[RMDB]
RNA sequence: GGGAACGACUCGAGUAGAGUCGAAAAUGACAUUGGCAUGGCCUAGAGCUUCAAAUUCCACGUGUGUUGCCACAACACAAGUACUGUGUCAACAUCUUAUAUUUCUAUAUACCAGUCAGGUGGUUGAGCGUCCAUGUAAAUUCGUUUACAUGGACGCAAAAGAAACAACAACAACAAC
Reactivity to DMS in 0.01 (KOAc 150mM, MgCl2 10mM, bicine 150mM(pH8.5), 24C), signal-to-noise 2, nucleotides 027 to 126: u000g010a090c050a120u000u010g000g010c040a060u000g020g000c120c090u010a070g000a150g010c060u010u000c120a030a060a160u000u000c010c040a060c110g000u000g030u010g000u010u010g000c100c070a070c030a080a080c060a080c090a100a090g000u010a040c120u020g030u000g010u010c020a040a030c050a060u000c110u010u010a080u000a070u000u000u000c080u010a090u010a060u000a070c040c010a050g010u010c130a090g020g000u000g040g010u000u000g000a190
Reactivity to 2A3 in 0.01 (KOAc 150mM, MgCl2 10mM, bicine 150mM(pH8.5), 24C), signal-to-noise 2, nucleotides 027 to 126: u070g010a030c000a050u070u110g020g000c030a070u050g070g050c000c020u050a080g020a050g090c020u060u030c060a090a040a130u130u000c010c000a090c110g120u090g000u000g000u020u010g050c050c010a010c040a060a010c020a010c030a110a000g050u050a120c060u040g010u000g010u030c000a020a000c000a060u050c040u110u150a190u020a020u170u130u000c010u040a110u010a020u020a190c000c000a020g120u170c030a040g100g180u020g020g060u040u020g000a020

The record gives the reactivity of an RNA of 177 nucleotides to DMS and 2A3. DMS adducts were read by reverse transcription with MarathonRT. Conditions: 150 mM KOAc, 10 mM MgCl2 and 150 mM bicine (pH 8.5), 24 C.